[RMDB]
RNA sequence: GGGAACGACUCGAGUAGAGUCGAAAAUCUUGAAAGUAUUAGGCUCAGUGAUCUAGAGUACAAGCAUGCAAUCCUUGAUGAGUCACAAUAUACAAUAAGGAGAGAUGUUGGUGCUACAACUGCUAUCGUCUCACGAUUACUUCGGUAAUCGUGAGACAAAAGAAACAACAACAACAAC
Reactivity to 2A3 in 0.01 (KOAc 150mM, MgCl2 10mM, bicine 150mM(pH8.5), 24C), signal-to-noise 1, nucleotides 027 to 126: u000c000u000u040g130a090a060a030g100u050a070u190u070a040g030g000c020u010c140a000g000u020g090a120u080c010u130a000g000a030g100u070a020c000a000a030g040c000a010u220g150c000a020a040u060c000c010u070u080g060a060u090g020a050g070u120c180a020c020a210a090u260a000u060a160c030a140a010u190a110a000g000g000a010g000a010g010a020u020g000u050u020g000g000u030g010c050u040a120c030a150a020c000u020g090c020u090a090u220c040
Reactivity to DMS in 0.01 (KOAc 150mM, MgCl2 10mM, bicine 150mM(pH8.5), 24C), signal-to-noise 1, nucleotides 027 to 126: u000c030u000u000g000a120a140a130g010u000a110u010u000a080g000g000c030u000c040a010g000u000g010a080u000c240u000a060g000a060g000u000a040c010a090a090g000c040a000u000g010c050a050a270u000c060c010u020u000g000a130u000g000a070g010u000c190a050c190a050a050u000a210u000a040c110a060a120u000a000a050g000g020a080g000a150g020a020u000g010u000u000g000g050u000g000c050u000a040c090a030a000c110u000g000c110u010a020u000c180